This 177-nucleotide RNA was probed chemically with 2A3 and DMS.
[RMDB]
RNA sequence: GGGAACGACUCGAGUAGAGUCGAAAAGCUGGGUACGCUCGGCUUUAGAGCGCGCGGACCCGGCCGAUCCCGCGAGGCGAGGUCGGAUGGUGGUGGUGGCCGUGAUGGUGCGGCGUGCGGGUCAUUGUUUCUAGGCGGAAUUCGUUCCGCCUAGAAAAAAAGAAACAACAACAACAAC
Reactivity to 2A3 in 0.01 (KOAc 150mM, MgCl2 10mM, bicine 150mM(pH8.5), 24C), signal-to-noise 1, nucleotides 027 to 126: g000c000u030g000g000g000u000a000c040g010c030u070c010g140g000c000u060u030u030a040g010a010g000c000g020c000g000c000g000g020a000c000c000c000g010g000c020c000g040a070u090c030c010c000g010c040g040a020g060g030c090g070a110g000g070u060c000g030g020a150u000g000g190u020g000g040u120g040g050u080g060g000c000c000g100u030g010a190u270g090g000u190g010c050g010g010c040g040u020g000c050g050g040g020u000c020a060u000u260g040
Reactivity to DMS in 0.01 (KOAc 150mM, MgCl2 10mM, bicine 150mM(pH8.5), 24C), signal-to-noise 2, nucleotides 027 to 126: g000c020u010g000g050g020u000a020c020g030c010u010c000g000g000c020u020u010u010a080g000a160g040c030g010c300g020c000g000g000a020c010c000c000g000g010c000c000g020a120u010c000c030c040g030c190g000a130g000g010c070g000a140g000g010u020c050g000g020a070u020g000g000u030g030g020u000g020g000u040g000g020c010c070g000u000g010a160u030g000g030u040g010c060g010g000c050g010u010g000c080g060g000g000u060c070a100u010u030g000